Conditions: 150 mM KOAc, 10 mM MgCl2 and 150 mM bicine (pH 8.5), 24 C.
Chemical mapping of a 177-nucleotide RNA with DMS.

[RMDB]
RNA sequence: GGGAACGACUCGAGUAGAGUCGAAAAUAGUAGCCGAAGCGACAUCGCAAAGGGGGCGAGGGGUGGUCCUGCGGGCGCGAGGAAGGACACCCGAAGAAAGGAAGGGUGAAAACCCUGUUUCGGCGGGGUAUUAUAACGUCUUCGGACGUUAUAAUACAAAAGAAACAACAACAACAAC
Reactivity to DMS in 0.01 (KOAc 150mM, MgCl2 10mM, bicine 150mM(pH8.5), 24C), signal-to-noise 3, nucleotides 027 to 126: u000a070g020u010a140g010c000c000g020a040a060g010c030g020a110c130a060u010c060g010c050a070a090a150g010g000g010g010g020c020g010a070g000g030g000g020u000g010g020u000c050c020u010g010c070g010g010g010c060g010c040g010a070g010g010a150a030g000g020a100c040a110c000c010c010g030a070a060g000a060a040a060g010g020a080a050g000g000g000u000g000a060a050a120a020c010c000c000u000g000u000u000u000c020g010g030c030g000g010g000
It was measured as part of the RMDB library VIROID.